[RMDB]
RNA sequence: GGGAACGACUCGAGUAGAGUCGAAAAGGGGUCGCAUGUGGCUUUCGACAUGCUGGGCACUGAAGCCUCCACGGUGCUCCAGCAACAGCGAAAGCGUAACAUCAUGCGACGGAGGCACCCAAAUCGUUGUUUACCUCUUCGGAGGUAAACAACGAAACACUAAACGACGGUUCGCCGUCGUUUAGUGAAAAGAAACAACAACAACAAC
Reactivity to 2A3 in 0.01 (KOAc 150mM, MgCl2 10mM, bicine 150mM(pH8.5), 24C), signal-to-noise 2, nucleotides 027 to 156: g200g030g060g010u000c000g000c000a010u010g020u040g060g000c010u020u000u010c070g150a250c050a130u050g000c010u020g000g040g000c000a000c000u010g000a050a000g010c000c000u000c010c000a020c010g000g000u000g020c030u090c060c000a000g010c000a060a080c070a110g090c000g000a000a000a000g000c000g020u020a010a010c030a140u190c010a000u000g000c000g000a000c010g000g000a000g000g000c010a050c010c000c010a020a100a090u060c010g000u000u000g000u020u000u000a000c010c000u060c020u090u150c300g140g000a000g020g000u000a000a000a000c000a000a000c000g000a000a000a000